RNA sequence: GGGAACGACUCGAGUAGAGUCGAAAACAGAAGUACAGGAAUAUCAUGUAUCAUUUUGCCAUGGGGGAGGCGUGCGCGCGGUGCAAGUACUGGGACGAUAUGUACAAGGCCUACUCGGCUCAGGUCGGAUACAACGUUUCUUCGGAAACGUUGUAUCAAAAGAAACAACAACAACAAC
Reactivity to 2A3 in 0.01 (KOAc 150mM, MgCl2 10mM, bicine 150mM(pH8.5), 24C), signal-to-noise 2, nucleotides 027 to 126: c040a010g090a100a010g050u080a040c020a030g010g140a140a080u100a060u160c070a090u060g050u050a050u080c070a120u060u120u120u120g020c020c070a060u070g000g000g050g000g000a020g040g030c040g040u010g020c030g000c010g000c050g060g000u010g020c020a030a030g050u000a040c040u030g030g000g000a030c010g010a040u030a040u190g030u010a040c020a070a050g010g000c000c000u030a040c010u020c020g060g000c050u010c040a000g100g000u030c010g050
Reactivity to DMS in 0.01 (KOAc 150mM, MgCl2 10mM, bicine 150mM(pH8.5), 24C), signal-to-noise 3, nucleotides 027 to 126: c070a020g020a100a090g010u000a040c030a020g010g010a130a090u000a090u010c100a070u000g010u000a030u010c120a130u000u010u010u000g010c050c040a080u020g010g000g000g030g010a110g000g010c050g010u010g000c080g020c060g020c080g010g000u000g010c090a040a070g020u000a060c030u000g000g000g000a100c070g010a070u000a050u000g010u000a040c090a080a160g000g000c010c020u010a040c080u000c040g020g010c090u000c080a050g020g000u010c100g010

Record summary:
The record gives the reactivity of an RNA of 177 nucleotides to 2A3 and DMS. For 2A3, 3,300 sequencing reads were counted. For DMS the reverse transcriptase was MarathonRT. The reactions ran in a buffer of 150 mM KOAc, 10 mM MgCl2 and 150 mM bicine (pH 8.5), at 24 C.